[RMDB]
RNA sequence: GGGAACGACUCGAGUAGAGUCGAAAAUUUAACGGGCUCGGUGCCCAGGCUGGAGUGCAGUGGCGCGAUCAUGGCUCGCUGCAGCCUCGACCUAGGGUAGUAACUGGAACUGCAGGUAUGCACCACCCCUGUGUAACUGUUUCGACAGUUACACAGGAAAAGAAACAACAACAACAAC
Reactivity to 2A3 in 0.01 (KOAc 150mM, MgCl2 10mM, bicine 150mM(pH8.5), 24C), signal-to-noise 3, nucleotides 027 to 126: u090u080u050a060a030c040g000g030g010c050u040c120g040g020u050g010c010c020c020a010g020g000c020u060g070g020a060g040u060g000c050a010g010u020g040g030c090g020c020g120a080u140c100a120u220g130g000c020u020c040g040c010u010g020c010a020g030c010c000u030c020g080a100c000c020u060a130g000g040g010u040a050g030u030a050a060c060u060g000g080a040a020c020u060g000c030a010g050g030u090a040u110g000c020a030c010c010a010c000c000
Reactivity to DMS in 0.01 (KOAc 150mM, MgCl2 10mM, bicine 150mM(pH8.5), 24C), signal-to-noise 4, nucleotides 027 to 126: u000u010u010a110a140c150g010g010g000c070u000c110g040g020u000g000c010c010c000a020g000g000c020u000g010g020a040g020u010g040c030a040g030u000g010g000c090g020c070g000a100u010c150a130u000g000g010c020u000c020g020c030u000g000c010a050g020c070c000u000c030g000a070c020c020u000a100g020g010g010u010a060g010u000a070a090c080u010g010g000a100a100c110u000g000c030a050g010g010u000a050u000g010c060a060c050c040a130c100c090